[RMDB]
RNA sequence: GGGAACGACUCGAGUAGAGUCGAAAAGGUGCAGACACCGUGACGUUGCGACGUCUGUUCCGCGGGCUCAGAAAAGCUGAAAUGCACGCUGGUGGGAAUCGUCGUGCUAUCGAGAUCAUGCGUGAGCACUGAGAGCUGUCUUCGGACAGCUCUCAGUAAAAGAAACAACAACAACAAC
Reactivity to DMS in 0.01 (KOAc 150mM, MgCl2 10mM, bicine 150mM(pH8.5), 24C), signal-to-noise 1, nucleotides 027 to 126: g010g000u000g030c020a060g020a070c010a090c010c000g020u000g040a150c100g020u030u010g010c040g030a070c050g020u000c050u000g000u000u010c030c020g000c140g000g010g000c030u010c020a100g000a110a120a070a120g000c030u010g000a060a090a140u020g010c020a020c010g010c020u000g050g050u000g000g000g020a120a040u000c010g010u000c010g010u000g010c030u000a270u000c020g000a120g010a080u020c040a040u010g000c120g010u000g000a060g030c060
Reactivity to 2A3 in 0.01 (KOAc 150mM, MgCl2 10mM, bicine 150mM(pH8.5), 24C), signal-to-noise 1, nucleotides 027 to 126: g030g020u030g000c000a010g050a040c000a020c030c020g010u020g030a130c200g050u110u300g000c030g000a000c050g020u000c030u020g050u100u000c000c000g000c030g000g060g000c030u010c090a050g140a110a180a010a000g020c000u050g030a070a120a060u140g020c000a010c130g000c020u050g010g060u040g000g000g060a050a140u080c000g030u010c000g010u030g000c020u030a060u130c100g050a050g020a110u090c000a030u120g010c010g080u060g020a020g000c000
Source: RMDB library OK2TRN, as collected in RNAgym. This 177-nucleotide RNA was probed chemically with DMS and 2A3. DMS adducts were read by reverse transcription with MarathonRT. High DMS reactivity at an A or C suggests that its Watson-Crick edge is free. 2A3 adducts were read by reverse transcription with SuperScript II with manganese.